Source: RMDB libraries RFM100 and RFMREP, as collected in RNAgym. This 177-nucleotide RNA was probed chemically with 2A3 and DMS.

RNA sequence: GGGAACGACUCGAGUAGAGUCGAAAAGAAGUCAUAGUUUUCCUAUCGUAGUGUGCAAUAAAAACCGUUCUACUGCCACACGGGUACUGGCCUUGAAGCUGUAUCGGUUCCAAAGUUGUUCGAACAAUCAAACAAAGAAUUUCGAUUCUUUGUUUGAAAAAGAAACAACAACAACAAC
Reactivity to 2A3 in 0.01 (KOAc 150mM, MgCl2 10mM, bicine 150mM(pH8.5), 24C), signal-to-noise 6, nucleotides 027 to 126: g110a080a000g080u120c050a090u140a080g050u030u040u040u020c010c000u050a120u110c050g060u060a120g030u030g030u030g070c050a050a070u140a190a130a050a020a020c030c010g010u100u050c040u080a090c040u040g000c010c000a060c010a020c030g020g000g000u070a100c090u120g090g000c000c010u030u050g040a070a000g020c040u030g010u070a080u300c020g020g000u010u040c020c010a110a090a030g000u000u010g000u010u040c020g020a050a030c030a020a040
Reactivity to DMS in 0.01 (KOAc 150mM, MgCl2 10mM, bicine 150mM(pH8.5), 24C), signal-to-noise 4, nucleotides 027 to 126: g000a110a070g020u010c090a070u020a060g000u000u000u000u000c000c010u000a060u010c030g000u000a080g020u030g010u000g000c040a090a040u020a050a100a080a120a080c140c160g010u010u010c060u010a100c050u020g000c010c020a040c070a060c060g000g000g030u000a040c060u030g000g030c030c040u010u020g000a090a200g010c050u000g020u000a040u000c020g020g020u000u010c030c030a050a040a130g010u000u000g010u000u000c050g020a050a090c250a070a130